RNA sequence: GGGAACGACUCGAGUAGAGUCGAAAAGAAGGGUGAAAGCCCUUGAUACUGUAGUGGAAAUUAUAAAUAAGAAGAGUUCUGAGUUGCUUAAGCAGAACUAAAAUAAAAAGACAAGCAUUAGUACAAACAUGGCGAGGUAAGUUCGCUUACCUCGCAAGAUAAACAUUGUGUUCGCACAAUGUUUAUCAAAAGAAACAACAACAACAAC
Reactivity to DMS in 0.01 (KOAc 150mM, MgCl2 10mM, bicine 150mM(pH8.5), 24C), signal-to-noise 2, nucleotides 027 to 156: g000a060a010g040g060g030u010g020a130a100a210g000c010c000c030u010u010g000a140u000a130c060u000g030u000a090g050u000g000g000a060a050a090u010u000a000u000a080a030a090u000a140a150g020a080a160g020a120g010u010u000c010u010g010a080g020u000u010g000c060u010u010a070a140g000c010a040g010a050a050c030u010a030a040a070a130u010a030a060a100a100a080g000a120c040a030a080g000c010a060u000u000a100g040u020a110c100a110a060a120c050a150u000g020g000c020g020a030g020g000u000a020a010g010u010u010c300g030c010u000u000a010c000c000u000c020g040c010a010a010
Reactivity to 2A3 in 0.01 (KOAc 150mM, MgCl2 10mM, bicine 150mM(pH8.5), 24C), signal-to-noise 4, nucleotides 027 to 156: g050a000a000g000g020g000u030g030a080a010a010g010c010c010c020u010u000g020a020u040a070c040u060g070u110a040g020u040g030g060a060a050a060u130u080a140u190a230a100a030u200a040a020g030a040a030g040a000g050u000u010c000u000g020a030g030u040u060g050c020u060u040a090a010g000c000a000g010a000a000c070u060a000a010a000a010u110a000a110a000a000a000g030a010c010a000a000g010c010a010u040u080a040g050u140a060c050a110a110a000c050a130u100g100g000c000g000a000g000g000u000a000a010g010u030u090c170g000c120u000u000a000c000c000u010c000g000c000a000a000

Conditions: 150 mM KOAc, 10 mM MgCl2 and 150 mM bicine (pH 8.5), 24 C.
The record gives the reactivity of an RNA of 207 nucleotides to DMS and 2A3.
Reactivities are given for positions 27 through 156.
The data come from the RNA Mapping Database (RMDB), library M2RFPK.
The 2A3 profile rests on 3,497 reads.